[RMDB]
RNA sequence: GGGAACGACUCGAGUAGAGUCGAAAAGACUGAAUGUGACACUUGUAUUUCUGAGUGUCAGGAUGAUGGUGUUUUGGUCAGAUCAACUGGAUUCUUGAUCACAUCAGGAGUCAUUUGCUCUCAUGGAGCACAGUAAGCAAUUCGUUGCUUACUGUGCAAAAGAAACAACAACAACAAC
Reactivity to 2A3 in 0.01 (KOAc 150mM, MgCl2 10mM, bicine 150mM(pH8.5), 24C), signal-to-noise 3, nucleotides 027 to 126: g090a010c040u060g070a090a050u140g020u020g050a000c000a000c000u040u020g060u190a110u070u180u020c070u130g020a010g010u030g010u010c000a000g040g010a010u100g010a010u030g020g020u010g030u010u120u110u110g070g030u060c040a020g010a100u060c020a060a160c080u110g080g020a020u090u000c010u010u100g000a030u110c050a020c030a150u030c010a010g050g010a010g010u000c030a040u010u060u040g040c040u020c000u010c030a080u090g090g060a060
Reactivity to DMS in 0.01 (KOAc 150mM, MgCl2 10mM, bicine 150mM(pH8.5), 24C), signal-to-noise 5, nucleotides 027 to 126: g010a140c060u000g010a130a060u000g020u000g010a030c000a000c020u010u010g020u010a070u000u010u010c070u020g000a030g020u000g000u000c010a010g000g030a040u000g010a300u010g000g000u000g020u000u000u000u000g020g010u010c110a070g010a060u000c040a130a090c100u000g000g000a090u000u010c020u000u000g000a020u010c070a040c020a280u000c000a010g000g010a020g020u000c010a060u000u000u000g010c110u000c010u000c050a080u020g000g020a210